[RMDB]
RNA sequence: GGGAACGACUCGAGUAGAGUCGAAAAGAUAUGGAGAAUCAACAAGUCCAACAGCCAGAAUCGGAAACGAUUCUGGACAUGGAUGAGUUGAGUUCUCCUAAGUCAAACGGUCUGUUCGCAGACCGAAUCCUCGAAAUAGGUUCGCCUAUUUCGAGGAAAAAGAAACAACAACAACAAC
Reactivity to 2A3 in 0.01 (KOAc 150mM, MgCl2 10mM, bicine 150mM(pH8.5), 24C), signal-to-noise 1, nucleotides 027 to 126: g020a010u070a050u090g010g010a020g010a020a000u010c000a010a020c000a000a000g030u010c020c020a060a040c070a210g070c000c000a000g000a010a000u000c000g010g030a100a020a030c000g000a000u000u000c000u000g010g000a010c000a050u050g000g030a000u000g000a010g020u040u000g010a000g000u020u000c010u000c010c000u000a070a000g040u020c060a180a030a080c000g000g000u000c010u030g110u120u100c300g000c150a010g010a000c000c000g000a020a140
Reactivity to DMS in 0.01 (KOAc 150mM, MgCl2 10mM, bicine 150mM(pH8.5), 24C), signal-to-noise 2, nucleotides 027 to 126: g040a010u000a300u000g000g000a010g040a080a070u010c000a000a000c000a040a300g000u000c000c010a010a100c160a230g000c050c000a010g010a010a010u010c000g010g010a100a130a220c000g010a010u000u000c000u010g010g000a030c070a090u000g000g010a010u010g000a300g000u000u000g000a010g010u010u000c010u000c000c020u000a000a120g020u000c050a180a140a260c000g000g010u020c010u000g010u000u030c170g020c000a020g030a050c040c000g000a050a050